[RMDB]
Record summary: Structure probing data (2A3 and DMS) for a 177-nucleotide construct. It was measured as part of the RMDB library OK2TST. The DMS profile rests on 2,872 reads. The reactions ran in a buffer of 150 mM KOAc, 10 mM MgCl2 and 150 mM bicine (pH 8.5), at 24 C.

RNA sequence: GGGAACGACUCGAGUAGAGUCGAAAAAGCUUUAUCCCACCAAUUGAGCAAGAUGCUAAUCUGUUGCAUAUCGUUCUUGGAGAGACAGUAGAGUGGCUUGGCUGAUCUGAGCUGGGCAUGGUGGUACAAAUCAAACACGGUUCGCCGUGUUUGAUUUAAAAGAAACAACAACAACAAC
Reactivity to 2A3 in 0.01 (KOAc 150mM, MgCl2 10mM, bicine 150mM(pH8.5), 24C), signal-to-noise 1, nucleotides 027 to 126: a000g020c040u080u070u060a180u120c010c000c000a000c020c010a080a070u130u200g020a040g000c050a050a010g050a160u140g030c050u070a080a100u060c070u080g060u070u110g030c030a020u030a030u190c060g050u080u000c000u080u010g050g020a080g000a000g010a020c000a010g110u080a010g020a010g080u090g000g000c000u010u050g000g000c030u010g010a070u090c040u090g050a030g030c000u030g000g000g000c000a020u010g020g010u030g020g000u070a020c050
Reactivity to DMS in 0.01 (KOAc 150mM, MgCl2 10mM, bicine 150mM(pH8.5), 24C), signal-to-noise 3, nucleotides 027 to 126: a080g000c100u010u000u000a090u010c030c010c010a180c110c090a090a050u010u010g020a030g010c020a090a070g000a050u010g020c040u010a100a100u010c130u000g000u000u000g000c040a040u000a100u010c070g020u010u000c040u010u000g010g000a100g000a150g010a070c080a080g020u020a060g000a080g020u000g010g010c030u010u000g030g000c050u000g000a110u010c140u010g010a050g010c030u000g000g000g010c050a060u010g010g010u000g000g010u010a070c180

2A3 adducts were read by reverse transcription with SuperScript II with manganese.